[RMDB]
RNA sequence: GGGAACGACUCGAGUAGAGUCGAAAACGGAGCUUCCUCUGCUGAUAAAACAAAUGAGAUUACAAUAAAAUACAAGGGAAUUCAGGGUGUUGAUAACUUCUAGCAUAUGAAUGCUUAGAACUAGCAUGUACUUGCAAGCCUCUCUAUGGCAGCAGGAAUCCCAGGUAAUGUUCGCAUUACCUGGGAUAAAAGAAACAACAACAACAAC
Reactivity to DMS in 0.01 (KOAc 150mM, MgCl2 10mM, bicine 150mM(pH8.5), 24C), signal-to-noise 1, nucleotides 027 to 156: c020g010g040a120g050c120u000u000c010c020u000c050u000g000c010u010g010a180u010a140a010a100a120c050a050a100a080u020g000a060g020a130u010u020a090c050a050a150u020a060a050a080a080u020a050c010a050a050g000g000g000a100a040u000u000c030a050g030g020g040u000g000u000u010g040a150u000a030a050c100u020u000c000u000a030g030c010a070u010a060u000g010a070a090u000g010c000u000u020a030g000a030a020c020u000a030g050c080a020u010g040u020a000c040u000u000g040c070a050a070g020c010c010u000c110u000c080u000a080u000g000g030c010a050g050c040a030g020g050a130
Reactivity to 2A3 in 0.01 (KOAc 150mM, MgCl2 10mM, bicine 150mM(pH8.5), 24C), signal-to-noise 3, nucleotides 027 to 156: c040g020g020a030g040c020u050u020c000c000u020c010u000g000c010u050g050a110u150a090a150a040a000c060a060a160a210u090g020a060g010a050u190u240a070c080a050a060u240a160a120a030a040u110a080c080a040a030g000g010g030a060a060u080u080c010a010g030g020g040u050g020u040u080g030a030u020a090a140c020u020u000c010u040a000g000c020a030u050a090u170g150a270a020u060g060c010u090u060a030g010a070a020c020u030a020g020c050a010u050g030u130a060c030u040u010g040c030a030a040g010c000c000u060c000u000c010u090a050u100g030g000c010a000g020c000a000g030g000a030
The record gives the reactivity of an RNA of 207 nucleotides to DMS and 2A3. Conditions: 150 mM KOAc, 10 mM MgCl2 and 150 mM bicine (pH 8.5), 24 C. Source: RMDB library OK3TST, as collected in RNAgym.